An RNA of 177 nucleotides, treated with 2A3 and read out base by base.
RNA sequence: GGGAACGACUCGAGUAGAGUCGAAAAUUUCUGCCUCAUCACCCAGCGGUAUAAAGAUUCCAUUGUAUGGGCUUACCUUUACAUCGUCGUGAUAGUGAUAUGGCGCAUCGACGAUUUUGUACACAUCCGGACGUGGGAGUUUCGACUCCCACGUCCGAAAAGAAACAACAACAACAAC
Reactivity to 2A3 in 0.01 (KOAc 150mM, MgCl2 10mM, bicine 150mM(pH8.5), 24C), signal-to-noise 2, nucleotides 027 to 126: u100u120u000c020u050g000c010c000u000c080a070u120c050a020c090c000c030a000g040c050g030g030u030a040u050a030a090a000g140a210u050u030c080c030a070u170u050g170u300a210u080g050g020g000c080u030u190a100c000c000u090u080u010a000c050a000u000c000g020u000c040g080u040g090a100u130a150g080u000g050a070u000a210u220g000g000c020g040c090a090u150c060g060a070c010g020a030u160u100u060u000g020u050a000c150a080c000a220u000c000
The 2A3 profile rests on 461 reads. For 2A3 the reverse transcriptase was SuperScript II with manganese.